This 207-nucleotide RNA was probed chemically with 2A3 and DMS. For 2A3, 8,649 sequencing reads were counted. The reactions ran in a buffer of 150 mM KOAc, 10 mM MgCl2 and 150 mM bicine (pH 8.5), at 24 C. Source: RMDB library RNAMAK, as collected in RNAgym. The DMS profile rests on 5,075 reads.
[RMDB]
RNA sequence: GGGAACGACUCGAGUAGAGUCGAAAAUGUGUUCGUUCGCGAACACAAAAAACCUUUGUGCGUAGGACUUUUGACGCAGUCACCCAACCCAUUGGGUUGACAAGUCUGCGAUAAGUCCUGACGCACUCUGGUAAACCCCAACUAUUCGUAGUUGGGGGGUCUUUAAUACUUUCGAGUAUUAAAGACCAAAAGAAACAACAACAACAAC
Reactivity to 2A3 in 0.01 (KOAc 150mM, MgCl2 10mM, bicine 150mM(pH8.5), 24C), signal-to-noise 5, nucleotides 027 to 156: u080g000u000g000u000u010c010g020u020u060c220g000c060g100a060a000c030a000c000a050a100a000a000a050a030c010c000u020u010u010g000u000g000c000g020u010a000g000g010a010c000u050u040u110u200g060a090c040g000c010a010g010u030c020a030c020c030c000a010a010c000c030c090a300u150u300g000g000g000u000u020g000a010c010a030a140g010u000c010u000g000c010g010a030u010a070a000g000u000c000c000u000g040a000c000g000c010a000c000u000c000u000g010g000u040a160a130a090c000c010c010c000a000a010c000u020a020u110u160c250g110u070a000g000u000u000g000g000g000g000
Reactivity to DMS in 0.01 (KOAc 150mM, MgCl2 10mM, bicine 150mM(pH8.5), 24C), signal-to-noise 2, nucleotides 027 to 156: u000g020u000g030u000u000c020g020u000u010c300g060c030g020a040a000c000a010c010a010a010a060a100a080a020c010c010u010u000u010g000u000g020c010g000u010a050g030g000a020c000u010u000u000u010g010a210c100g010c000a050g010u000c030a250c100c000c000a030a040c040c010c020a300u000u000g020g040g010u000u010g000a030c070a060a140g010u000c020u000g020c000g000a180u010a040a030g000u000c000c000u000g000a040c000g000c000a000c010u010c020u000g020g010u000a030a090a170c000c000c000c010a000a050c000u010a070u000u010c220g070u000a020g020u000u000g020g000g010g020